[RMDB]
RNA sequence: GGGAACGACUCGAGUAGAGUCGAAAAGAAGGUCAUCGAGCUGCGCGGCGGCACGAAGGACGAAGCGACGUUCAGGAACGAAGCGAACAUGGUACAGAAGGUGCUGUCGGCGACGGGCGGCCGCGUUGGCGGCGACGAGUGGCGCAACUUCAUCCAACCUAAAACGUAGCUUCGGCUACGUUUUAGGAAAAGAAACAACAACAACAAC
Reactivity to 2A3 in 0.01 (KOAc 150mM, MgCl2 10mM, bicine 150mM(pH8.5), 24C), signal-to-noise 1, nucleotides 027 to 156: g140a010a000g090g040u070c000a000u020c040g050a050g000c000u040g000c090g000c000g000g010c050g010g000c040a010c050g010a100a000g060g030a110c040g020a110a010g020c000g050a030c000g000u030u130c130a180g000g200a060a000c120g000a160a050g000c010g070a040a010c010a030u190g020g000u100a130c030a030g040a190a010g110g000u030g010c010u070g110u140c010g050g030c000g120a150c040g000g020g170c050g000g030c020c000g000c020g000u100u210g070g000c000g040g000c010g010a060c070g020a050g000u030g010g000c030g030c080a060a040c060u000u000c010a020u040c000c000a070a050